[RMDB]
RNA sequence: GGGAACGACUCGAGUAGAGUCGAAAAUCCAGCUGAAACAAACCAACUGCGAACGACGAACGUUUCGCCCUCGCCGCUUAAACACCGGUGAGCGUCUCAACGGCAGGCCGAUGGGCCGGGCCCAAGCCGCAAGGUGGAAGGCUGAGACGUCAUGCACCAUUCAAUCUCGGUUCGCCGAGAUUGAAUGAAAAGAAACAACAACAACAAC
Reactivity to DMS in 0.01 (KOAc 150mM, MgCl2 10mM, bicine 150mM(pH8.5), 24C), signal-to-noise 1, nucleotides 027 to 156: u000c000c000a110g020c010u010g010a230a070a160c120a170a090a180c070c010a060a070c020u010g000c040g000a060a060c030g030a090c080g010a050a130c070g000u000u000u000c040g020c010c020c040u000c010g000c000c000g000c010u020u000a100a150a190c060a060c130c000g000g040u000g030a200g020c000g020u000c010u010c010a090a070c030g010g090c020a060g030g030c000c010g040a120u000g040g020g060c030c030g000g020g000c010c010c010a120a300g000c000c010g000c230a100a200g000g040u000g010g000a140a040g000g010c010u020g000a060g010a040c020g000u010c050a060u010g030c000a070c050
Reactivity to 2A3 in 0.01 (KOAc 150mM, MgCl2 10mM, bicine 150mM(pH8.5), 24C), signal-to-noise 2, nucleotides 027 to 156: u020c010c000a030g050c080u140g100a100a030a080c070a040a060a080c100c060a060a100c070u130g030c020g040a040a020c000g150a040c080g110a210a030c030g020u040u070u020c030g010c020c030c000u000c010g000c010c000g000c020u060u080a030a040a000c000a030c030c000g000g000u010g010a010g000c000g000u000c000u000c000a010a090c010g030g000c020a020g070g010c010c040g180a170u240g080g020g000c000c000g000g020g000c010c000c000a010a000g000c000c000g060c050a000a130g000g000u000g000g030a010a000g030g000c030u020g000a000g000a010c000g030u030c000a050u170g020c040a040c040